[RMDB]
RNA sequence: GGGAACGACUCGAGUAGAGUCGAAAAAUCAAUGGCCAUUGUAAGAGUAGAAGGAUCCAUGAAGCAAUAACUCUCUUUGCUGAAAUGUGCGACCAAAUAGACUCUUGAUAUUUCAUUCUUACAGUGCCGGUAAUCAUUUAUUCGUAAAUGAUUACCGAAAAGAAACAACAACAACAAC
Reactivity to 2A3 in 0.01 (KOAc 150mM, MgCl2 10mM, bicine 150mM(pH8.5), 24C), signal-to-noise 9, nucleotides 027 to 126: a000u130c070a020a090u100g060g010c050c010a010u010u010g000u010a000a000g000a010g020u110a070g030a110a030g050g010a040u010c010c010a020u070g040a030a000g000c010a010a030u080a170a140c020u060c010u010c010u180u020u020g000c010u020g020a070a080a080u190g020u050g040c090g040a040c020c020a030a070a050u150a060g130a100c030u040c000u110u100g060a040u040a080u080u070u030c030a020u010u010c000u000u000a010c000a010g010u000g020c010
Reactivity to DMS in 0.01 (KOAc 150mM, MgCl2 10mM, bicine 150mM(pH8.5), 24C), signal-to-noise 9, nucleotides 027 to 126: a090u030c080a100a070u010g010g010c110c020a020u000u000g010u000a010a010g000a020g020u000a110g020a040a030g010g010a110u000c030c040a030u000g000a140a030g010c010a020a020u010a070a120c220u020c140u010c120u010u000u000g010c000u000g000a090a070a050u000g010u010g010c110g010a090c100c070a050a050a070u010a100g000a100c120u010c100u010u010g000a050u000a060u020u000u000c020a030u000u000c000u000u000a000c010a010g010u000g000c060
An RNA of 177 nucleotides, treated with 2A3 and DMS and read out base by base. The RNA was probed in 150 mM KOAc, 10 mM MgCl2 and 150 mM bicine (pH 8.5) at 24 C. DMS adducts were read by reverse transcription with MarathonRT.